[RMDB]
RNA sequence: GGGAACGACUCGAGUAGAGUCGAAAAGAUAUGGAUACAUGAGCUUUUGACGGAAUUGACUUGUAUGGGAGUAUCGGAAACGAUACUCCCAUACAAGUCACUUCCGAUAAGCUCAGUAUCCUAAGUCGUGUAAUAGAUUGUUCGCAAUCUAUUACACAAAAGAAACAACAACAACAAC
Reactivity to DMS in 0.01 (KOAc 150mM, MgCl2 10mM, bicine 150mM(pH8.5), 24C), signal-to-noise 3, nucleotides 027 to 126: g010a120u000a300u000g000g010a010u010a010c010a120u000g010a020g020c000u000u000u010u010g020a300c140g020g000a020a000u000u000g010a020c000u010u010g000u000a010u010g000g000g000a040g020u010a000u000c000g000g000a110a080a210c010g020a030u000a010c000u000c000c000c010a000u000a000c010a000a000g000u000c000a000c080u000u000c010c000g010a030u000a010a010g010c000u000c010a020g010u000a000u000c000c010u000a030a100g010u000c100
This 177-nucleotide RNA was probed chemically with DMS.